[RMDB]
RNA sequence: GGGAACGACUCGAGUAGAGUCGAAAAAGUGCCAGGUACGCCUGGCACAAGCUGCUGUAGGGUAGGAGGAGAGAGGUGUUACCUUAUCAGCUGCCUCCUCUCCCAUCCUCUCCUUCUGCAGCAGCAAUCAAACCAAUCAAUUCGUUGAUUGGUUUGAAAAAGAAACAACAACAACAAC
Reactivity to 2A3 in 0.01 (KOAc 150mM, MgCl2 10mM, bicine 150mM(pH8.5), 24C), signal-to-noise 9, nucleotides 027 to 126: a000g010u000g000c010c000a000g020g000u040a040c270g070c020c000u000g000g010c000a000c000a000a000g000c000u000g000c000u010g010u030a030g000g010g020u010a010g010g010a010g010g010a040g000a000g000a010g000g010u030g050u130u100a130c030c030u160u150a190u260c100a020g050c030u080g020c000c000u060c020c020u000c000u000c000c010c000a110u030c000c010u030c050u140c010c010u210u160c020u010g000c000a000g000c000a000g000c000a000a020
Reactivity to DMS in 0.01 (KOAc 150mM, MgCl2 10mM, bicine 150mM(pH8.5), 24C), signal-to-noise 7, nucleotides 027 to 126: a080g010u000g020c000c000a000g010g010u000a110c220g030c000c000u010g010g000c000a000c000a020a060g000c000u000g010c000u000g020u000a010g010g010g010u000a020g000g000a070g000g000a070g000a020g010a030g010g010u000g000u010u020a080c160c060u020u040a110u030c230a100g030c110u020g010c050c020u000c060c010u000c010u010c000c030c050a130u010c010c010u000c100u000c020c020u030u020c050u000g010c000a010g000c000a000g010c020a140a130

Chemical mapping of a 177-nucleotide RNA with 2A3 and DMS. Conditions: 150 mM KOAc, 10 mM MgCl2 and 150 mM bicine (pH 8.5), 24 C. For 2A3 the reverse transcriptase was SuperScript II with manganese.